RNA sequence: GGGAACGACUCGAGUAGAGUCGAAAAAGGGCCGCAAUUUGCGCCACCACAUGCAUAUUUAUCAACGUCAACAGGGAUACUAUCGACGUAGCCAAGUUCGGAUUCCGCGCGAUAUGUAAAAUUACCCAUCCAAUCAAGGAUAAAGUUUUUAACAGCAUCAUGUGGAGUAGUUCGCUACUCCACAUGAAAAAGAAACAACAACAACAAC
Reactivity to DMS in 0.01 (KOAc 150mM, MgCl2 10mM, bicine 150mM(pH8.5), 24C), signal-to-noise 1, nucleotides 027 to 156: a010g060g040g020c070c000g010c040a000a100u000u000u000g010c010g010c000c030a080c040c040a050c150a160u010g030c020a040u000a030u000u000u000a070u010c000a210a010c040g020u010c040a100a070c030a080g020g020g010a230u000a080c030u000a120u020c010g010a070c140g010u000a110g000c080c050a080a110g020u000u050c130g040g040a150u020u000c050c070g000c080g020c040g030a030u000a010u000g000u000a050a000a060a160u010u000a070c010c000c010a150u000c040c020a200a180u000c040a060a090g010g000a060u000a030a000a120g040u010u000u000u010u000a010a180c100a130g060c010a180
Reactivity to 2A3 in 0.01 (KOAc 150mM, MgCl2 10mM, bicine 150mM(pH8.5), 24C), signal-to-noise 3, nucleotides 027 to 156: a000g040g000g030c140c060g000c120a170a250u150u230u190g020c010g000c000c020a030c050c050a030c010a070u080g050c050a050u080a090u160u130u050a140u220c100a080a030c070g160u050c050a060a080c020a100g010g020g010a020u070a050c010u050a050u030c030g120a100c010g110u040a020g040c010c000a070a040g070u210u140c060g030g000a140u130u010c000c040g020c000g000c000g040a000u000a000u080g020u030a070a110a050a040u080u040a020c030c000c000a000u030c010c000a040a070u160c120a140a110g000g030a010u120a050a070a070g000u050u020u040u040u140a230a090c100a000g050c000a050